[RMDB]
RNA sequence: GGGAACGACUCGAGUAGAGUCGAAAAAGCUUCCGCUCGUAAGACGGGGAUAACGCGGAGUCAAACCAAAACGAGAUCGUGUGGAAGCCACCGUUUGAGGAUCGAAGCACUAAAUUAAAUCAAACUAGCUUAAGUUUAGCGUGUCUGUCCGCAUGCUUCACAAAAACGAGUUCGCUCGUUUUUGUGAAAAAGAAACAACAACAACAAC
Reactivity to 2A3 in 0.01 (KOAc 150mM, MgCl2 10mM, bicine 150mM(pH8.5), 24C), signal-to-noise 1, nucleotides 027 to 156: a000g000c020u030u000c000c000g050c010u020c020g090u090a100a020g030a040c050g000g000g050g000a060u110a190a090c090g000c020g090g000a020g040u090c040a080a060a060c030c080a010a130a010a000c060g030a020g050a100u160c050g050u020g020u070g070g010a030a030g000c030c000a050c000c020g040u000u060u090g050a060g020g000a050u160c120g020a050a020g030c000a000c090u080a090a070a020u230u130a010a000a020u080c050a000a020a130c040u050a010g040c030u100u090a120a080g050u080u070u010a000g010c000g000u000g020u000c000u060g060u010c010c000g000c000a000u000g000c000u060
An RNA of 207 nucleotides, treated with 2A3 and read out base by base. For 2A3 the reverse transcriptase was SuperScript II with manganese. The RNA was probed in 150 mM KOAc, 10 mM MgCl2 and 150 mM bicine (pH 8.5) at 24 C.